[RMDB]
RNA sequence: GGGAACGACUCGAGUAGAGUCGAAAACCACAGAUCUUCGGAUCUGUGGAAACAACUAAUACUGUCAGUUGAGACAGACACAAAUACAUUGAGUGUACAAUGAAAGCGAUUGCUUCGGCAAUCGCAACCUAGCAAGAGUGUUCGCACUCUUGCUAGGAAAAGAAACAACAACAACAAC
Reactivity to DMS in 0.01 (KOAc 150mM, MgCl2 10mM, bicine 150mM(pH8.5), 24C), signal-to-noise 2, nucleotides 027 to 126: c010c000a000c000a000g000a000u000c010u000u000c170g050g030a000u000c000u000g000u010g020g000a000a100a070c200a100a100c080u000a110a100u010a140c010u000g000u000c010a100g000u000u020g000a130g000a010c010a010g020a130c170a000c100a070a100a050u010a110c050a080u000u010g000a150g020u010g000u010a070c110a090a050u010g000a070a050a110g020c000g000a020u000u010g010c000u000u000c140g000g030c000a010a000u000c020g000c010a020a010
Reactivity to 2A3 in 0.01 (KOAc 150mM, MgCl2 10mM, bicine 150mM(pH8.5), 24C), signal-to-noise 3, nucleotides 027 to 126: c010c000a000c000a000g000a000u000c010u080u170c250g150g000a010u000c000u000g000u000g000g030a000a070a000c010a000a000c020u160a090a130u130a260c010u010g000u000c030a140g020u150u150g140a080g010a100c000a000g050a030c020a010c000a070a200a010u240a060c080a070u060u110g050a040g170u130g030u050a070c050a050a080u120g090a220a060a030g010c000g010a000u010u020g010c000u030u080c200g070g000c000a000a000u010c000g000c000a000a000